[RMDB]
Conditions: 150 mM KOAc, 10 mM MgCl2 and 150 mM bicine (pH 8.5), 24 C. Chemical mapping of a 177-nucleotide RNA with DMS. Values cover nucleotides 27 to 126.
RNA sequence: GGGAACGACUCGAGUAGAGUCGAAAAGAUAUGGAUAUACCCAGACAUGUUCGUCGGAAACGACUGAACAACAGCUGGUGUAUAUCCUAAGUCAAAAGGGGCCAAAUUCUUCGGAAUUUGGCCCCAACCAUCUGUAAACGUUCGCGUUUACAGAUGGAAAAGAAACAACAACAACAAC
Reactivity to DMS in 0.01 (KOAc 150mM, MgCl2 10mM, bicine 150mM(pH8.5), 24C), signal-to-noise 1, nucleotides 027 to 126: g000a070u000a300u010g000g010a030u000a010u000a000c000c010c000a010g000a140c130a220u010g000u000u000c010g010u000c010g010g010a100a070a150c030g010a010c010u040g000a000a000c010a020a120c220a110g010c000u000g000g010u020g000u000a000u000a000u000c000c000u000a000a040g000u010c000a050a040a060a130g010g030g050g010c000c000a000a030a060u000u000c000u000u010c170g010g040a000a010u000u000u000g000g020c010c000c030c000a010a030